[RMDB]
RNA sequence: GGGAACGACUCGAGUAGAGUCGAAAAGCAAAUAUUGUCUUAAUUACUUAGGCUAAAAGAAAUAAGUAUUAAAGCGGGACAAGGCAUCGACAUUUGAUACAAGUAUUGAUCAAUGGAUGUCUUAUUUAAACCUCAUCCGGCUUCGGCCGGAUGAGAAGUACUCCUGUUUCUUCGGAAACAGGAGUACAAAAGAAACAACAACAACAAC
Reactivity to 2A3 in 0.01 (KOAc 150mM, MgCl2 10mM, bicine 150mM(pH8.5), 24C), signal-to-noise 1, nucleotides 027 to 156: g020c010a030a050a020u190a040u130u040g060u020c030u040u130a160a120u190u090a080c040u020u040a060g040g100c020u210a200a170a000a000g090a030a100a000u010a010a010g040u040a010u060u160a290a130a000g080c070g040g020g030a090c030a120a000g000g000c010a030u000c010g140a110c010a010u120u130u190g030a000u150a100c030a160a000g150u090a170u150u300g070a010u030c030a000a000u010g000g000a000u010g010u000c010u010u000a030u000u110u030a060a050a020c020c000u010c000a000u030c000c000g000g020c010u000u070c160g020g100c000c000g080g000a000u000g000a000g000a000a000

Description:
The data come from the RNA Mapping Database (RMDB), library M2RFPK. Chemical mapping of a 207-nucleotide RNA with 2A3. For 2A3, 643 sequencing reads were counted. Reactivities are given for positions 27 through 156. The reactions ran in a buffer of 150 mM KOAc, 10 mM MgCl2 and 150 mM bicine (pH 8.5), at 24 C. 2A3 is a SHAPE reagent: it acylates the 2'-hydroxyl of flexible nucleotides of all four kinds.